[RMDB]
RNA sequence: GGGAACGACUCGAGUAGAGUCGAAAACAGUCCACAGAUUAUCUCGAUGAUCGUAUCGACGAUAUUCACCUUCUUGCUGGCGGGCCUUUCGAGGUCCGUUUUCUCAGGUCAUUGAGCUUUUUGUGCCUCAAACCGCACUGUUCGCAGUGCGGUUUGAAAAAGAAACAACAACAACAAC
Reactivity to 2A3 in 0.01 (KOAc 150mM, MgCl2 10mM, bicine 150mM(pH8.5), 24C), signal-to-noise 4, nucleotides 027 to 126: c010a000g150u090c060c000a030c020a030g050a030u020u060a030u090c000u000c000g030a030u030g020a080u070c060g080u210a090u120c100g070a040c060g050a040u040a070u070u090c020a050c020c010u090u100c020u070u130g020c060u050g000g000c000g000g010g000c000c000u060u070u070c140g130a000g020g000u000c000c000g010u000u000u020u000c000u000c010a000g000g000u020c000a040u020u050g020a010g020c030u080u040u020u050u020g020u060g020c030c020
Reactivity to DMS in 0.01 (KOAc 150mM, MgCl2 10mM, bicine 150mM(pH8.5), 24C), signal-to-noise 2, nucleotides 027 to 126: c190a150g020u000c120c010a070c110a040g010a010u000u000a020u010c010u000c010g020a010u010g000a060u000c180g000u020a100u000c040g030a100c130g000a060u010a010u030u020c080a110c040c040u000u030c030u000u000g020c100u010g000g000c030g000g000g000c000c000u000u030u070c140g010a030g040g000u000c010c000g000u000u000u000u000c030u000c030a140g000g000u010c030a050u030u000g020a070g000c130u000u000u010u020u020g020u000g000c120c020